[RMDB]
RNA sequence: GGGAACGACUCGAGUAGAGUCGAAAACGUAUUGGCGGGUUCGCGGCAUGGUUGCACAACCGGUGCUAAAAACGCUCGGAGCGCCAGUUGCCACAACAGAUGUGGUGGCAGAUGAAGUCGGCCGACCCGUAAGACCAAUUUUCGAAUUGGUCUUACGAAAAGAAACAACAACAACAAC
Reactivity to 2A3 in 0.01 (KOAc 150mM, MgCl2 10mM, bicine 150mM(pH8.5), 24C), signal-to-noise 5, nucleotides 027 to 126: c030g050u110a090u140u130g070g000c020g010g040g040u070u100c030g000c020g050g010c030a030u050g050g030u090u300g020c040a040c020a110a110c040c020g030g030u100g000c010u090a160a110a050a030a030c060g010c040u050c060g020g010a020g010c010g000c010c000a020g020u040u040g000c010c010a010c000a070a050c030a070g300a300u270g060u040g050g000u000g000g000c020a010g000a050u140g080a110a030g080u040c030g070g050c030c020g030a070c010c020
Reactivity to DMS in 0.01 (KOAc 150mM, MgCl2 10mM, bicine 150mM(pH8.5), 24C), signal-to-noise 9, nucleotides 027 to 126: c080g010u000a090u000u010g010g020c020g000g000g010u000u000c160g030c100g010g000c040a110u000g010g010u000u010g040c090a080c150a110a100c040c030g010g000u010g000c020u010a040a080a070a110a170c120g010c050u000c040g020g000a090g000c020g000c020c000a050g000u000u000g000c000c000a010c000a030a040c050a200g010a110u010g020u000g010g020u000g000g010c000a020g010a080u000g000a080a080g010u000c020g010g020c020c020g010a060c050c040
Chemical mapping of a 177-nucleotide RNA with 2A3 and DMS. 2A3 adducts were read by reverse transcription with SuperScript II with manganese. The DMS profile rests on 19,433 reads. The RNA was probed in 150 mM KOAc, 10 mM MgCl2 and 150 mM bicine (pH 8.5) at 24 C.